The data come from the RNA Mapping Database (RMDB), library TTRDES. Structure probing data (DMS and 2A3) for a 177-nucleotide construct. The reactions ran in a buffer of 150 mM KOAc, 10 mM MgCl2 and 150 mM bicine (pH 8.5), at 24 C.
RNA sequence: GGGAACGACUCGAGUAGAGUCGAAAAGAUAUGGAGGUAUUAGGCUUUUGACGUCCGACGAAUCGGAAACGAUUCCAAGGACGAUAAGCCUUAUACCUCCUAAGUCAAACAACGCUUCGGCGUUGAAGUAGUGACAAGAGUUCGCUCUUGUCACUACAAAAGAAACAACAACAACAAC
Reactivity to DMS in 0.01 (KOAc 150mM, MgCl2 10mM, bicine 150mM(pH8.5), 24C), signal-to-noise 4, nucleotides 027 to 126: g010a010u000a300u000g000g010a010g020g000u010a020u000u010a020g010g000c010u000u000u000u000g020a280c080g010u010c000c000g020a300c300g000a000a000u020c000g020g000a110a090a230c000g010a030u000u000c000c040a070a300g030g010a000c000g000a040u010a010a020g000c000c000u010u000a000u000a000c000c010u000c000c010u010a010a060g000u000c010a170a100a300c000a020a010c000g000c020u010u020c190g070g000c010g010u000u000g010a030a110
Reactivity to 2A3 in 0.01 (KOAc 150mM, MgCl2 10mM, bicine 150mM(pH8.5), 24C), signal-to-noise 2, nucleotides 027 to 126: g000a000u050a050u160g000g010a000g030g020u010a000u030u070a020g010g000c030u160u070u080u250g300a170c040g000u010c000c000g000a030c030g000a020a000u010c000g000g060a090a010a010c010g000a000u010u000c020c010a000a000g010g020a000c000g000a000u000a010a000g000c000c010u000u000a000u010a020c010c000u000c000c000u010a000a000g000u000c000a000a010a060c000a000a010c000g000c000u070u100c290g230g000c000g000u010u000g010a030a040